[RMDB]
RNA sequence: GGGAACGACUCGAGUAGAGUCGAAAAGUAUUUCGCCAUCUGGCAACCGCCUGCCGUAAAGGUGACUGCCUGAUAACCCGCGGCAAAAUGCACAAUGCCUCGACGCUGGCUGGCAUCGCAUUCAGUCAGCUUUAUAUACCUUCGGGUAUAUAAAGCUAAAAGAAACAACAACAACAAC
Reactivity to 2A3 in 0.01 (KOAc 150mM, MgCl2 10mM, bicine 150mM(pH8.5), 24C), signal-to-noise 5, nucleotides 027 to 126: g010u020a070u030u060u060c030g020c020c030a060u030c060u050g010g000c000a030a030c030c020g010c010c010u050g080c070c080g220u180a170a110a000g020g000u000g010a040c040u020g000c000c000u010g010a020u040a080a120c020c040c040g060c040g020g000c030a030a030a010a010u070g000c020a040c030a050a050u040g010c000c000u030c040g070a050c050g000c070u040g040g010c020u010g010g000c020a030u090c050g030c030a050u090u110c010a020g070u030c010
Reactivity to DMS in 0.01 (KOAc 150mM, MgCl2 10mM, bicine 150mM(pH8.5), 24C), signal-to-noise 8, nucleotides 027 to 126: g010u000a030u000u000u000c060g010c010c020a100u000c040u000g010g010c020a030a060c050c040g030c010c010u010g020c130c160g010u010a060a090a040g010g000u000g010a060c050u000g010c020c010u010g000a070u000a100a140c090c040c060g020c190g000g000c020a030a030a040a040u000g000c020a050c140a060a050u000g010c010c010u000c110g010a080c080g000c040u000g000g010c040u000g000g010c080a070u000c120g010c110a110u010u000c030a050g010u000c100